[RMDB]
RNA sequence: GGGAACGACUCGAGUAGAGUCGAAAACGCGUAUUCGUACGCGAGGUAUCCUAAGUCGCUAGAGCUACAAAGGCACAUCGAUCUCUGUCGGAAACGACAGAGGGAGUGCCAUAAAGGCUCUUGGACCGAUAUGGAAUGGCGCGGGCUUCGGCCCGAAAGCAAGUUGAAAUUUCGAUUUCAACUUGCUAAAAGAAACAACAACAACAAC
Reactivity to DMS in 0.01 (KOAc 150mM, MgCl2 10mM, bicine 150mM(pH8.5), 24C), signal-to-noise 3, nucleotides 027 to 156: c020g020c000g040u010a030u000u010c260g060u000a010c000g030c010g030a050g030g030u000a080u000c020c010u000a160a170g010u000c030g020c090u010a040g020a050g010c030u000a100c080a110a300a260g000g010c000a010c000a210u000c120g020a090u000c000u010c000u000g030u010c010g010g000a170a110a230c020g020a000c000a010g000a010g030g000g010a020g030u000g000c000c010a010u000a010a170a220g010g000c010u000c010u000u000g010g010a020c020c020g010a240u000a060u000g010g030a080a180u010g000g020c100g010c000g000g020g010c010u000u010c210g040g010c000c010c000g010a030a070
Reactivity to 2A3 in 0.01 (KOAc 150mM, MgCl2 10mM, bicine 150mM(pH8.5), 24C), signal-to-noise 5, nucleotides 027 to 156: c010g000c000g000u000a020u040u110c260g030u080a020c010g000c010g010a040g040g060u170a070u070c010c010u030a100a010g020u020c020g020c290u050a000g000a000g000c000u090a060c120a120a150a140g020g020c010a010c010a190u300c060g030a130u040c000u000c000u000g000u000c000g000g040a060a070a080c010g000a000c010a000g000a000g000g000g000a010g000u010g000c010c000a010u030a000a040a010g020g000c000u000c000u000u010g000g020a020c020c030g020a030u030a100u300g060g070a110a110u120g100g000c120g000c020g110g010g000c000u040u080c090g120g000c030c000c000g000a010a030